Conditions: 150 mM KOAc, 10 mM MgCl2 and 150 mM bicine (pH 8.5), 24 C. Chemical mapping of a 177-nucleotide RNA with DMS and 2A3. For DMS, 54,355 sequencing reads were counted. Reactivities are given for positions 27 through 126.

RNA sequence: GGGAACGACUCGAGUAGAGUCGAAAACUGGAUCAUGGUAUGGGACCGCACAUAGGAUGACAGCGGAUUUGAAUGGAUGGAGGAGUUUCCGCUGCUCGGCUCUUCCGGCGCUCGUUGCGGUGCUGCACAUAUUAUAUGACUUCGGUCAUAUAAUAUGAAAAGAAACAACAACAACAAC
Reactivity to DMS in 0.01 (KOAc 150mM, MgCl2 10mM, bicine 150mM(pH8.5), 24C), signal-to-noise 9, nucleotides 027 to 126: c040u000g000g000a070u020c050a050u010g010g010u010a050u020g010g010g000a070c030c020g010c040a060c100a080u030a090g010g000a110u020g010a080c060a040g010c020g000g000a090u010u020u020g020a140a110u020g000g010a100u010g010g000a040g000g010a110g000u000u000u010c030c020g010c030u000g000c070u010c040g000g000c030u000c020u000u000c030c010g010g010c050g010c050u010c100g000u010u000g010c090g000g010u010g010c020u010g010c130a220
Reactivity to 2A3 in 0.01 (KOAc 150mM, MgCl2 10mM, bicine 150mM(pH8.5), 24C), signal-to-noise 9, nucleotides 027 to 126: c030u040g050g040a050u080c050a100u120g130g020u160a100u090g030g020g050a040c010c010g050c020a030c010a050u130a060g110g020a060u100g040a030c020a010g010c010g020g050a050u080u080u190g210a180a090u120g050g130a050u070g040g060a060g050g010a060g020u010u060u010c010c010g000c010u010g020c040u030c020g040g000c010u010c000u120u040c030c010g040g000c030g000c020u050c060g050u050u040g010c010g010g040u040g060c020u040g000c010a010